[RMDB]
RNA sequence: GGGAACGACUCGAGUAGAGUCGAAAAAGUUCUGUGCAUGUAGAACUCUGCACUGCAUUUCAUAUAAUCAAAGAAGAUACAAAGAUGAAGCAUAUGAAAUGGGACACCUUUCCAAGGUAGGAGAUGGUAUUUGAUGUCUAUUCGUAGACAUCAAAUAAAAAGAAACAACAACAACAAC
Reactivity to DMS in 0.01 (KOAc 150mM, MgCl2 10mM, bicine 150mM(pH8.5), 24C), signal-to-noise 8, nucleotides 027 to 126: a060g020u000u000c020u010g020u010g010c060a050u010g010u000a080g010a090a130c100u000c070u000g000c090a070c040u000g010c010a070u010u000u010c000a010u000a020u010a150a140u010c040a050a090a140g010a100a100g010a170u010a110c190a090a080a140g000a110u000g000a070a110g020c210a020u010a010u000g010a010a010a020u000g010g000g000a070c110a060c020c020u000u000u010c020c020a100a060g000g010u010a070g010g000a050g010a080u000g020g010
Reactivity to 2A3 in 0.01 (KOAc 150mM, MgCl2 10mM, bicine 150mM(pH8.5), 24C), signal-to-noise 5, nucleotides 027 to 126: a000g030u050u020c050u030g040u040g020c030a050u110g010u130a060g050a210a060c040u010c030u060g010c020a030c050u060g010c010a010u010u000u010c020a000u030a010u020a060a080u060c040a040a070a130g100a140a040g090a180u170a200c080a080a180a020g090a030u120g040a070a010g030c050a000u010a000u020g020a020a000a010u020g010g010g000a020c020a040c020c010u010u040u020c030c030a030a010g130g010u050a060g040g090a080g000a040u120g080g020